[RMDB]
RNA sequence: GGGAACGACUCGAGUAGAGUCGAAAAGUGUCGAUGCCCGAAAUGCCAGCCUGACGGAUCAUGGUCCUUGCCUGAGCGUUCUCACGCUGGAUGACGGUAAAAUGCGUGAACGCCCGGCUAUGCCGGAGUGAUCCUUUUAGUUCGCUAAAAGGAUCACAAAAGAAACAACAACAACAAC
Reactivity to DMS in 0.01 (KOAc 150mM, MgCl2 10mM, bicine 150mM(pH8.5), 24C), signal-to-noise 6, nucleotides 027 to 126: g010u000g000u000c030g010a140u010g010c020c010c020g000a060a060a070u020g020c020c030a050g010c020c060u000g000a080c070g010g010a080u010c050a060u010g020g010u010c090c110u000u010g020c010c010u000g000a060g010c020g000u010u010c120u010c040a040c140g010c000u000g000g010a110u010g000a180c300g020g010u000a040a080a100a060u000g010c010g010u000g010a090a080c070g000c080c010c030g010g010c020u010a080u010g010c010c000g000g010a210
Reactivity to 2A3 in 0.01 (KOAc 150mM, MgCl2 10mM, bicine 150mM(pH8.5), 24C), signal-to-noise 4, nucleotides 027 to 126: g050u030g050u050c020g030a070u130g020c000c000c010g010a040a050a060u300g030c010c000a010g000c010c030u040g020a010c020g030g050a160u050c010a070u170g030g000u050c040c060u080u190g040c000c000u020g020a030g010c010g020u080u000c040u030c030a020c020g010c000u020g000g030a050u050g020a020c040g000g000u050a040a070a040a060u080g010c010g020u030g050a090a020c020g030c010c000c000g000g000c030u120a110u270g000c010c010g030g010a050